The record gives the reactivity of an RNA of 177 nucleotides to DMS and 2A3. The DMS profile rests on 10,719 reads. For 2A3 the reverse transcriptase was SuperScript II with manganese. Source: RMDB library OK2TRN, as collected in RNAgym. Values cover nucleotides 27 to 126.
RNA sequence: GGGAACGACUCGAGUAGAGUCGAAAAUUUCGCAGGAGAUCCAAGACUGUCUCCUUGGAUAAUGGGCAUUUGGGAUAAGUGAGGAAUAUGUUUUUAGCGCUAACUGAAAAUGCGUUAACACGAGGCAUGGAGUGUUAAGAUUCGUCUUAACACUCCAAAAAGAAACAACAACAACAAC
Reactivity to DMS in 0.01 (KOAc 150mM, MgCl2 10mM, bicine 150mM(pH8.5), 24C), signal-to-noise 8, nucleotides 027 to 126: u000u010u000c040g020c100a110g000g010a130g010a060u010c040c040a040a070g010a150c160u010g010u000c020u000c020c010u000u000g010g000a030u000a080a090u010g010g000g010c070a110u000u010u000g000g010g000a120u010a050a080g000u000g010a120g010g000a090a060u000a070u010g000u000u000u000u010u000a020g000c020g010c020u000a090a150c210u000g010a060a050a070a090u000g000c020g020u010u000a020a050c300a050c160g010a040g010g000c080a090
Reactivity to 2A3 in 0.01 (KOAc 150mM, MgCl2 10mM, bicine 150mM(pH8.5), 24C), signal-to-noise 3, nucleotides 027 to 126: u050u080u070c060g020c040a050g030g080a070g010a020u000c020c000a040a010g060a050c070u030g050u020c020u020c040c000u000u010g060g000a040u060a150a070u100g020g040g000c080a110u090u080u140g030g000g040a060u060a140a100g050u070g110a040g050g000a090a050u090a100u190g180u000u170u010u010u040a030g000c030g000c020u060a120a050c070u070g110a050a050a040a070u170g000c010g010u000u050a020a020c050a000c080g030a000g000g010c050a060